An RNA of 177 nucleotides, treated with 2A3 and DMS and read out base by base. DMS adducts were read by reverse transcription with MarathonRT. The RNA was probed in 150 mM KOAc, 10 mM MgCl2 and 150 mM bicine (pH 8.5) at 24 C. For DMS, 41,119 sequencing reads were counted. It was measured as part of the RMDB library OK2TRN.
[RMDB]
RNA sequence: GGGAACGACUCGAGUAGAGUCGAAAAGCUGCCUCUGACGUCCUUCUCCCCCGGAAACGGGGCCGAAGGGUGGUAAUGCGUGUCGCCUGGCGCUGGCACGGGUAUGCGUGGCGGUCGACCCUGGCCGACCUAUACGAUCAUUCGUGAUCGUAUAGGUAAAAGAAACAACAACAACAAC
Reactivity to 2A3 in 0.01 (KOAc 150mM, MgCl2 10mM, bicine 150mM(pH8.5), 24C), signal-to-noise 9, nucleotides 027 to 126: g010c010u020g010c010c000u060c090u100g090a030c010g020u010c000c000u010u000c010u040c010c000c000c000c000g000g000a010a010a010c000g000g000g010g000c010c010g000a000a010g010g000g010u030g020g040u120a120a050u140g090c040g020u010g020u020c020g030c020c030u090g170g000c110g000c080u100g020g000c010a020c020g030g010g050u150a080u200g070c080g020u020g030g010c010g000g010u040c020g040a120c010c000c020u020g100g010c020c020g020
Reactivity to DMS in 0.01 (KOAc 150mM, MgCl2 10mM, bicine 150mM(pH8.5), 24C), signal-to-noise 9, nucleotides 027 to 126: g010c020u000g010c010c000u000c060u000g010a120c050g000u000c010c000u000u000c010u000c300c000c000c000c010g010g000a070a080a190c010g020g000g010g030c040c060g000a010a010g010g010g010u000g010g010u010a090a070u010g000c020g020u000g010u000c030g010c050c030u000g010g010c080g010c070u010g010g000c010a020c030g000g000g010u000a030u010g010c080g010u000g000g010c010g010g010u000c030g000a140c020c010c020u010g010g010c030c040g000